[RMDB]
RNA sequence: GGGAACGACUCGAGUAGAGUCGAAAAAGCAUUUAGCCUGAUUACUCUUUAAAUCAAAUCACGCAAUAGAGAGAAACUCGAGAGGUGAAAACCCCACAGCAUUCUGAAAUGUAUUUGGGAGUAAUCUAUGACUAUUGGGUCUUCGGACCCAAUAGAACUCCAUACCAAGAUUCGUCUUGGUAUGGAGAAAAGAAACAACAACAACAAC
Reactivity to 2A3 in 0.01 (KOAc 150mM, MgCl2 10mM, bicine 150mM(pH8.5), 24C), signal-to-noise 1, nucleotides 027 to 156: a010g080c090a140u200u130u140a060g000c010c020u020g000a010u000u020a000c000u010c100u140u110u300a020a020a040u070c000a000a000a060u020c040a030c050g010c050a120a140u170a020g010a020g020a010g030a070a170a070c020u010c060g120a060g000a060g120g010u020g010a050a070a060a050c010c000c020c000a060c000a030g060c010a040u120u110c000u100g050a090a080a080u060g030u120a010u010u000u020g020g020g000a010g010u020a020a010u000c060u070a170u170g110a040c000u000a000u000u000g000g010g000u000c000u010u020c090g100g010a000c010c020c000a000a000u010a000g000a000a000
The data come from the RNA Mapping Database (RMDB), library M2RFPK. The record gives the reactivity of an RNA of 207 nucleotides to 2A3. For 2A3 the reverse transcriptase was SuperScript II with manganese. The 2A3 profile rests on 762 reads. Reactivities are given for positions 27 through 156.